RNA sequence: GGGAACGACUCGAGUAGAGUCGAAAAGAUAUGGAUCGCUUGGACCUACGAGUACAACAGCUCGGAAACGAGACAUGUACGAGUAGCUAGCGAUCCUAAGUCAAACCUUUGGCUUCGGCCAAAGGAAUCCGGAAUAUUAGUUCGCUAAUAUUCCGGAAAAAGAAACAACAACAACAAC
Reactivity to 2A3 in 0.01 (KOAc 150mM, MgCl2 10mM, bicine 150mM(pH8.5), 24C), signal-to-noise 1, nucleotides 027 to 126: g030a010u070a040u170g000g010a000u000c000g050c040u080u190g060g130a190c040c000u010a010c010g010a010g010u010a000c010a150a020c020a160g030c000u000c000g030g030a040a060a030c010g010a000g020a030c070a170u070g000u000a000c010g000a000g010u000a000g010c000u020a000g010c000g010a000u000c000c010u000a020a000g020u010c000a100a070a140c010c000u000u010u010g000g000c010u040u030c300g140g000c000c000a000a000a000g000g020a010a070
Reactivity to DMS in 0.01 (KOAc 150mM, MgCl2 10mM, bicine 150mM(pH8.5), 24C), signal-to-noise 4, nucleotides 027 to 126: g010a030u000a300u000g010g020a000u000c000g000c000u010u000g020g010a150c300c010u010a010c010g010a300g000u000a010c010a040a100c250a160g000c000u010c000g000g000a080a070a140c010g000a020g010a020c090a140u000g000u000a010c000g010a280g000u000a000g000c000u000a020g000c000g020a000u000c010c010u000a000a080g000u000c030a090a150a140c000c000u000u020u000g010g000c000u000u010c230g030g020c000c000a000a010a010g000g000a030a030
Structure probing data (2A3 and DMS) for a 177-nucleotide construct.
Values cover nucleotides 27 to 126.
The reactions ran in a buffer of 150 mM KOAc, 10 mM MgCl2 and 150 mM bicine (pH 8.5), at 24 C.
The DMS profile rests on 3,708 reads.